An RNA of 177 nucleotides, treated with DMS and read out base by base. Source: RMDB library OK2TST, as collected in RNAgym. Values are in units of 0.01, from 0 to 300, in steps of 10.
[RMDB]
RNA sequence: GGGAACGACUCGAGUAGAGUCGAAAAGGACGUGGUAAAUACUCGGAGGUUUUUCGGUGUCGUAACCGAACUAAUGGGGAGUUAUGCGUCUUGAAAAUCCUCAAACCUGUUCGGUUGAAGAAAAUAAAUGGAUUUACUGGUUCGCCAGUAAAUCCAUAAAAGAAACAACAACAACAAC
Reactivity to DMS in 0.01 (KOAc 150mM, MgCl2 10mM, bicine 150mM(pH8.5), 24C), signal-to-noise 3, nucleotides 027 to 126: g000g020a030c030g040u000g020g010u020a010a060a060u010a040c010u000c000g000g000a300g000g000u020u010u020u010u000c020g010g010u010g020u020c300g020u020a140a020c000c000g010a020a020c010u010a010a220u000g000g010g000g030a040g010u010u000a030u000g000c000g000u000c020u010u000g000a090a090a140a100u000c000c010u000c090a070a060a090c070c040u000g000u010u010c100g010g000u000u030g000a050a100g000a070a060a080a080u020a070a110
Overview
For DMS, 1,611 sequencing reads were counted.